[RMDB]
RNA sequence: GGGAACGACUCGAGUAGAGUCGAAAAUAAUUUUUUGUCAAACUAGUUCUCUAUGGACAGCUUUCGUGAUAGAAUUAUAGAGAGAAAAUCGAGAUGACGCAAGCGGUGAGGAAAGGAGCAGAAGAGGGCGUGAUACGAGGACACGUGUCUCAUGUUACACUAAUAUGGACUUCGGUCCAUAUUAGUGAAAAGAAACAACAACAACAAC
Reactivity to DMS in 0.01 (KOAc 150mM, MgCl2 10mM, bicine 150mM(pH8.5), 24C), signal-to-noise 1, nucleotides 027 to 156: u020a030a000u020u020u000u000u000u000g040u000c020a060a060a120c050u000a080g020u000u000c020u010c070u010a160u000g030g020a040c040a010g030c060u000u000u010c070g020u020g010a160u010a100g000a050a080u000u000a120u000a050g010a160g030a130g000a020a070a050a040u000c040g000a100g000a090u010g000a090c100g010c050a080a130g070c040g000g030u000g010a090g020g030a040a040a050g010g000a050g020c060a100g000a040a030g000a080g050g000g000c030g020u000g000a060u020a090c050g040a050g040g020a120c020a060c040g030u000g000u000c020u020c020a060u010g000u010u000a190
Reactivity to 2A3 in 0.01 (KOAc 150mM, MgCl2 10mM, bicine 150mM(pH8.5), 24C), signal-to-noise 3, nucleotides 027 to 156: u070a010a030u020u010u040u050u130u130g090u060c100a100a070a030c040u040a050g010u060u030c030u000c030u070a040u100g050g020a040c020a040g040c060u060u120u050c100g040u060g080a040u050a130g030a020a050u210u030a030u100a130g040a010g000a000g040a030a020a050a080u090c030g030a010g000a080u070g020a020c040g000c070a010a020g000c030g070g000u070g010a030g000g020a050a030a030g040g000a010g000c050a020g020a050a000g030a070g010g010g010c000g010u020g010a030u030a120c040g030a070g090g010a010c030a000c090g080u110g060u050c010u000c020a030u070g000u030u010a020
Conditions: 150 mM KOAc, 10 mM MgCl2 and 150 mM bicine (pH 8.5), 24 C.
An RNA of 207 nucleotides, treated with DMS and 2A3 and read out base by base.
DMS adducts were read by reverse transcription with MarathonRT.